[RMDB]
RNA sequence: GGGAACGACUCGAGUAGAGUCGAAAAGAUAUGGAGAGCGUGAGGCCUACCCACCCGUCGGGAUCGGAAACGAUCCCACGGAGGGCUCGCUCUCCUAAGUCAAAAGCAGCACGUUCGCGUGCUGCAACCCGUGAGUAUACUUCGGUAUACUCACGGGAAAAGAAACAACAACAACAAC
Reactivity to DMS in 0.01 (KOAc 150mM, MgCl2 10mM, bicine 150mM(pH8.5), 24C), signal-to-noise 1, nucleotides 027 to 126: g030a060u030a160u010g000g000a000g040a000g030c000g000u000g030a150g000g000c070c030u010a190c040c000c020a300c110c010c020g020u000c160g000g000g000a010u000c000g040g000a070a050a150c020g000a010u000c010c000c010a000c000g000g000a180g050g000g030c010u010c000g000c000u000c000u040c000c000u010a010a020g000u040c140a090a060a130a200g000c030a000g000c000a000c000g010u000u000c190g000c010g040u000g000c000u000g010c020a000a040
Reactivity to 2A3 in 0.01 (KOAc 150mM, MgCl2 10mM, bicine 150mM(pH8.5), 24C), signal-to-noise 1, nucleotides 027 to 126: g020a010u190a190u300g000g000a000g010a000g010c000g050u170g290a170g140g040c020c010u030a120c150c010c020a050c000c000c000g040u040c280g000g000g000a000u010c020g000g060a030a070a030c000g000a000u030c060c000c010a000c000g030g000a000g020g000g000c040u020c010g000c000u000c000u050c000c000u000a040a010g200u150c150a000a000a090a110g000c040a010g040c000a000c000g030u080u110c270g030c020g140u000g030c000u000g000c010a020a010
Chemical mapping of a 177-nucleotide RNA with DMS and 2A3. Conditions: 150 mM KOAc, 10 mM MgCl2 and 150 mM bicine (pH 8.5), 24 C. For 2A3 the reverse transcriptase was SuperScript II with manganese. Source: RMDB library TTRDEL, as collected in RNAgym. Values cover nucleotides 27 to 126. For 2A3, 1,730 sequencing reads were counted.